[RMDB]
RNA sequence: GGGAACGACUCGAGUAGAGUCGAAAACUCUAUGGAUCAACUUGCAGCAUGUUCUGGAUUUAUGUAUUCAAUGAUUACAGCUAAACAAUAUGUUCAAUCUGGAGAUUAUCAUAAUAUUUUAGUUGUCCAGCUGCGGACUUUUCGAAGUCCGCAGCUGAAAAGAAACAACAACAACAAC
Reactivity to 2A3 in 0.01 (KOAc 150mM, MgCl2 10mM, bicine 150mM(pH8.5), 24C), signal-to-noise 1, nucleotides 027 to 126: c120u100c000u130a020u000g010g060a040u040c040a000a000c100u000u120g000c000a000g020c060a220u040g050u200u080c060u010g000g010a010u000u130u120a100u050g100u060a000u000u000c060a260a020u200g120a070u250u100a100c000a000g080c050u040a000a000a000c100a120a000u040a000u130g010u000u150c160a170a100u060c060u090g140g000a280g010a150u000u110a000u050c010a000u170a030a160u170a030u000u120u000u000a000g000u000u060g020u000c000